The record gives the reactivity of an RNA of 207 nucleotides to 2A3.
It was measured as part of the RMDB library M2RFOK.
2A3 adducts were read by reverse transcription with SuperScript II with manganese.
The 2A3 profile rests on 1,011 reads.
The RNA was probed in 150 mM KOAc, 10 mM MgCl2 and 150 mM bicine (pH 8.5) at 24 C.
[RMDB]
RNA sequence: GGGAACGACUCGAGUAGAGUCGAAAAGAAAGAAAGAAAGUUCAUUGUUUAUCGGAAACUUUAAACUAUAACCAUUCGAACUUUUCCAGAAGUUAGUUUGAAUAGAAAUUAAAAAGAAACUUCUGAAUGACCUUGGCACCGUUCGCGGUGCCAAGAACCAAAUGUACUUCUUCGGAAGUACAUUUGGAAAAGAAACAACAACAACAAC
Reactivity to 2A3 in 0.01 (KOAc 150mM, MgCl2 10mM, bicine 150mM(pH8.5), 24C), signal-to-noise 1, nucleotides 027 to 156: g010a020a050a000g050a010a040a050g050a070a140a010g000u020u070c050a050u080u150g040u090u140u180a050u120c050g050g060a090a010a020c030u030u070u070a030a100a020c040u040a020u060a180a020c050c000a020u010u000c000g000a000a000c000u000u000u000u050c100c000a010g000a030a000g000u000u040a000g000u000u010u000g030a030a000u080a210g010a000a040a010u170u140a090a150a060a010a000g000a000a000a000c000u010u000c000u000g000a030a040u070g050a050c000c020u000u000g010g010c000a020c020c020g070u090u080c160g010c030g180g000u010g070c000c040a000a000g000a000a000